An RNA of 177 nucleotides, treated with DMS and 2A3 and read out base by base. The DMS profile rests on 3,325 reads. The RNA was probed in 150 mM KOAc, 10 mM MgCl2 and 150 mM bicine (pH 8.5) at 24 C.

[RMDB]
RNA sequence: GGGAACGACUCGAGUAGAGUCGAAAAGCACCUGGGUUCGCCCAGGUGCAAAGAUCAGUAGCAUGCAAGAUCAAAUCCGAUAGGAUGCUUCAGGGAAACCAAAAAGCCAGUGCUUCGGCACUGGCAACCAACUAAACUUGUUCGCAAGUUUAGUUGGAAAAGAAACAACAACAACAAC
Reactivity to DMS in 0.01 (KOAc 150mM, MgCl2 10mM, bicine 150mM(pH8.5), 24C), signal-to-noise 4, nucleotides 027 to 126: g000c010a010c000c000u010g010g010g040u000u020c220g030c000c000c000a000g010g000u010g020c000a000a050a090g010a090u000c020a110g020u000a050g000c030a010u000g000c120a090a080g010a040u000c030a060a090a140u000c050c020g000a070u020a090g010g000a050u000g000c010u000u000c070a110g000g000g000a090a090a150c060c080a040a040a080a080a130g010c000c000a010g000u000g010c000u000u010c200g010g010c000a010c010u000g000g010c000a010a020
Reactivity to 2A3 in 0.01 (KOAc 150mM, MgCl2 10mM, bicine 150mM(pH8.5), 24C), signal-to-noise 3, nucleotides 027 to 126: g000c000a000c010c000u010g010g000g050u040u080c170g100c030c000c000a000g010g000u000g010c000a000a000a000g010a020u040c020a010g040u070a010g030c020a010u110g040c040a070a050g020a090u030c040a060a100a080u060c050c020g020a050u060a130g070g020a020u010g010c000u030u040c000a010g060g000g030a050a030a070c030c020a020a080a060a090a000g000c000c000a000g010u000g000c010u020u070c240g120g000c010a000c000u000g000g010c000a000a000